The record gives the reactivity of an RNA of 177 nucleotides to DMS and 2A3. The DMS profile rests on 14,217 reads.

RNA sequence: GGGAACGACUCGAGUAGAGUCGAAAAGAACAGAAUGCCGCACUGGCUGCCCUGAUGAGAACACACCCGUGACUAGCGUCGAAACAUCAACAGUGCGGGCUGUUGGUGUCGGAAGCCACUAAAAGAAAAUAUAUACGGCUUUCGAGCCGUAUAUAUUAAAAGAAACAACAACAACAAC
Reactivity to DMS in 0.01 (KOAc 150mM, MgCl2 10mM, bicine 150mM(pH8.5), 24C), signal-to-noise 6, nucleotides 027 to 126: g010a140a140c070a050g020a090a060u010g010c030c010g010c060a050c030u000g000g000c050u010g000c040c010c020u010g000a060u020g000a100g000a070a080c070a080c080a130c120c070c030g010u000g000a090c070u020a110g010c080g010u010c040g020a120a110a040c000a020u010c010a010a020c020a010g030u030g010c120g000g000g000c010u000g000u010u000g000g000u000g010u000c050g000g010a140a110g000c040c040a050c060u010a050a050a070a110g010a100a070
Reactivity to 2A3 in 0.01 (KOAc 150mM, MgCl2 10mM, bicine 150mM(pH8.5), 24C), signal-to-noise 5, nucleotides 027 to 126: g060a070a010c060a040g100a140a020u110g060c010c010g050c020a040c060u050g050g000c040u040g040c000c010c020u080g050a130u080g020a040g070a070a000c050a020c010a030c040c020c010g040u040g050a110c100u090a040g030c000g100u060c030g110a070a060a090c010a040u030c010a000a030c000a030g030u050g180c060g010g080g000c010u010g000u020u020g010g000u000g030u020c050g070g020a060a020g020c010c010a070c050u120a060a120a000a000g110a010a150
It was measured as part of the RMDB library OK1LIB.
For 2A3 the reverse transcriptase was SuperScript II with manganese.
The reactions ran in a buffer of 150 mM KOAc, 10 mM MgCl2 and 150 mM bicine (pH 8.5), at 24 C.
Values cover nucleotides 27 to 126.